[RMDB]
RNA sequence: GGGAACGACUCGAGUAGAGUCGAAAAACUAUGUAUGUGGAAAUUCCUAACCUCAUCCGCAUCAUCCGGAAAAUUGACAAAGAUUGUUUAGUAUCAAUUACAAGGAUCCGAGGGAUCGAUGGAUACAAACAUUUCUUACCUUCGGGUAAGAAAUGUUAAAAGAAACAACAACAACAAC
Reactivity to 2A3 in 0.01 (KOAc 150mM, MgCl2 10mM, bicine 150mM(pH8.5), 24C), signal-to-noise 1, nucleotides 027 to 126: a000c020u060a060u210g090u020a060u030g010u250g030g050a030a010a130u080u040c010c000u060a070a110c000c020u120c010a030u000c020c020g030c070a060u000c010a050u050c050c000g120g000a000a140a140a000u050u050g010a000c090a080a110a010g140a160u010u300g090u160u230u150a080g020u060a060u120c010a010a010u080u060a010c060a120a010g040g000a020u000c020c060g130a110g080g010g000a000u000c050g040a030u260g050g020a040u070a090c050a040
Reactivity to DMS in 0.01 (KOAc 150mM, MgCl2 10mM, bicine 150mM(pH8.5), 24C), signal-to-noise 2, nucleotides 027 to 126: a090c040u010a030u000g020u020a030u000g030u000g010g000a090a090a240u000u000c000c000u020a040a150c120c050u000c080a080u000c020c030g030c070a050u020c100a040u010c050c000g040g000a070a040a090a100u000u000g000a080c110a110a100a110g010a100u000u000g020u000u000u000a060g020u010a110u000c000a040a000u000u020a100c050a100a100g000g000a140u000c080c030g040a160g000g020g000a010u000c070g020a030u000g020g010a110u000a040c070a060